[RMDB]
An RNA of 207 nucleotides, treated with 2A3 and read out base by base. For 2A3 the reverse transcriptase was SuperScript II with manganese. The RNA was probed in 150 mM KOAc, 10 mM MgCl2 and 150 mM bicine (pH 8.5) at 24 C.

RNA sequence: GGGAACGACUCGAGUAGAGUCGAAAAACAUAUUACGAUAUGAUUCAGAUGGUGUCUUACUGGUUCGUACCAAGGGACAUAAUGGUUUCUUGUUUCCAACCAAAGAACAAGUGGCGAGGCUGAAUAAAAAACUGACUGCCGUUCGCGGCAGUCAGAACAGGUGAUUAUGCUUCGGCAUAAUCACCUGAAAAGAAACAACAACAACAAC
Reactivity to 2A3 in 0.01 (KOAc 150mM, MgCl2 10mM, bicine 150mM(pH8.5), 24C), signal-to-noise 1, nucleotides 027 to 156: a010c010a010u140a010u120u240a100c090g060a020u040a000u170g090a070u050u170c070a100g080a170u100g050g110u090g000u090c010u020u060a140c060u060g020g020u010u110c050g050u040a010c020c020a020a050g020g000g020a000c020a010u090a060a140u170g060g010u000u000u000c000u070u000g000u010u030u000c010c010a020a040c010c010a070a110a000g030a020a020c020a000a030g040u050g030g070c060g000a020g040g000c000u040g030a080a000u150a110a040a000a000a000a040c010u000g000a000c000u020g020c010c010g050u030u030c260g000c000g040g020c000a000g000u000c000a000g000a010a000